[RMDB]
RNA sequence: GGGAACGACUCGAGUAGAGUCGAAAACCCGGAGGUUCGCCUCCGGGAAAAAGCGUACUACGACCAAUAAGCCUAGUAUUCAACAGCUCCCAAAUAGGAGACAUGAAUAUCAGGCUUUCUGGUCGUAUCGCAAAAAACUGGUGCUUCGGCACCAGAAGUUUCUUACAAUCUUCGGAUUGUAAGAAACAAAAGAAACAACAACAACAAC
Reactivity to 2A3 in 0.01 (KOAc 150mM, MgCl2 10mM, bicine 150mM(pH8.5), 24C), signal-to-noise 1, nucleotides 027 to 156: c000c000c020g000g000a030g000g070u130u240c250g170c090c070u040c020c050g000g010g020a070a000a000a010a010g000c010g000u010a020c050u000a000c050g010a000c000c000a000a010u040a040a000g000c000c010u020a000g000u000a000u000u000c000a130a090c080a300g020c000u000c020c050c000a230a250a040u300a130g000g000a000g040a100c070a150u100g010a000a020u020a060u120c110a020g020g050c030u000u010u020c000u000g000g010u000c000g000u000a000u000c000g000c000a160a040a000a000a000a000c010u010g010g010u000g000c020u130u110c240g140g000c020a000c000c000a000g000a000a000
Chemical mapping of a 207-nucleotide RNA with 2A3. For 2A3, 569 sequencing reads were counted. It was measured as part of the RMDB library RNAMAK. The RNA was probed in 150 mM KOAc, 10 mM MgCl2 and 150 mM bicine (pH 8.5) at 24 C.